[RMDB]
This 177-nucleotide RNA was probed chemically with DMS. The data come from the RNA Mapping Database (RMDB), library M2PK50.

RNA sequence: GGGAACGACUCGAGUAGAGUCGAAAAAGUAUCUAAUUCGUUAGAUACUCGGGGACGGGUGAGGCGGCCGUGUGCGCAGACAGUGCUCCAGCCGCGCGGGCGAAUUUCGCCUAUUCGUAGGCGAAAAAUUGCAAAUAAACUUCGGUUUAUUUGCAAUAAAAGAAACAACAACAACAAC
Reactivity to DMS in 0.01 (KOAc 150mM, MgCl2 10mM, bicine 150mM(pH8.5), 24C), signal-to-noise 3, nucleotides 027 to 126: a030g000u000a010u000c000u000a000a010u000u010c130g030u000u000a000g010a020u000a000c000u000c090g000g000g010g010a100c100g000g000g000u010g010a110g010g010c030g000g020c000c020g010u010g010u000g030c030g030c020a120g000a080c160a170g010u000g020c020u010c010c020a090g000c020c010g010c030g000c120g010g000g000c110g010a090a100u000u000u000c000g010c000c000u000a010u000u010c200g010u000a010g000g010c000g000a000a000a000a090
Values cover nucleotides 27 to 126. Reactivities are rounded to 0.1 and cut off at 0 and 3. The RNA was probed in 150 mM KOAc, 10 mM MgCl2 and 150 mM bicine (pH 8.5) at 24 C.